This 177-nucleotide RNA was probed chemically with 2A3 and DMS.
The DMS profile rests on 1,894 reads.
[RMDB]
RNA sequence: GGGAACGACUCGAGUAGAGUCGAAAAGGCGAUCCGGGGGAAGGAGAUCCUGCGCUCGAGGAAGGCCCGGACGGCCUCUUCGUUCGCCGCAUUGAAGGCGAUGCGCUUCCCCUGUGAAGCGAGAGCCUCCAUUUCGUGCGUUCGCGCACGAAAUGGAAAAAGAAACAACAACAACAAC
Reactivity to 2A3 in 0.01 (KOAc 150mM, MgCl2 10mM, bicine 150mM(pH8.5), 24C), signal-to-noise 1, nucleotides 027 to 126: g040g000c030g030a010u010c000c020g010g000g000g000g000a010a000g050g060a120g040a110u120c020c000u030g000c030g000c030u030c010g020a030g000g020a230a160g020g040c010c000c020g030g060a040c060g010g000c000c000u000c010u020u010c000g000u000u030c020g010c000c020g000c050a060u030u180g150a280a130g230g000c070g020a010u030g000c030g000c020u000u020c010c030c000c030u010g060u060g040a050a000g040c060g020a030g010a010g100c000c030
Reactivity to DMS in 0.01 (KOAc 150mM, MgCl2 10mM, bicine 150mM(pH8.5), 24C), signal-to-noise 2, nucleotides 027 to 126: g000g000c020g000a150u000c020c010g020g000g000g020g000a060a010g030g010a210g010a130u000c090c070u000g010c030g020c030u010c020g030a040g010g000a100a060g020g010c000c010c120g020g000a190c300g000g020c000c020u010c000u000u000c010g010u000u000c010g020c010c060g000c060a060u000u000g000a180a140g000g000c100g000a040u000g010c030g000c010u010u000c000c000c070c070u010g000u000g020a050a150g020c040g000a060g010a250g020c030c010
Notes: The 2A3 profile rests on 1,746 reads.